[RMDB]
RNA sequence: GGGAACGACUCGAGUAGAGUCGAAAAGAUAUGGAUCUGAGUAGGGAGCUCUAGCUCGGAAACGAGCUAAGAGCGACGAUCUACGAAGAUCCUAAGUCAAAACAGUCUUGUCUUCGGACAAGACUGACGAGGAUUAGACGUUCGCGUCUAAUCCUCGAAAAGAAACAACAACAACAAC
Reactivity to DMS in 0.01 (KOAc 150mM, MgCl2 10mM, bicine 150mM(pH8.5), 24C), signal-to-noise 1, nucleotides 027 to 126: g000a020u020a300u010g000g010a040u000c000u000g000a300g000u000a020g000g000g010a010g040c000u010c000u000a020g000c000u000c030g000g000a050a130a190c000g010a000g000c000u000a030a050g030a020g010c000g040a050c260g020a030u020c010u000a000c000g030a220a020g000a000u040c000c000u000a040a090g020u010c010a110a140a140a180c010a000g010u000c000u000u010g000u010c000u000u030c250g010g020a030c000a010a000g020a030c010u000g030a030

This 177-nucleotide RNA was probed chemically with DMS. It was measured as part of the RMDB library TTRDES.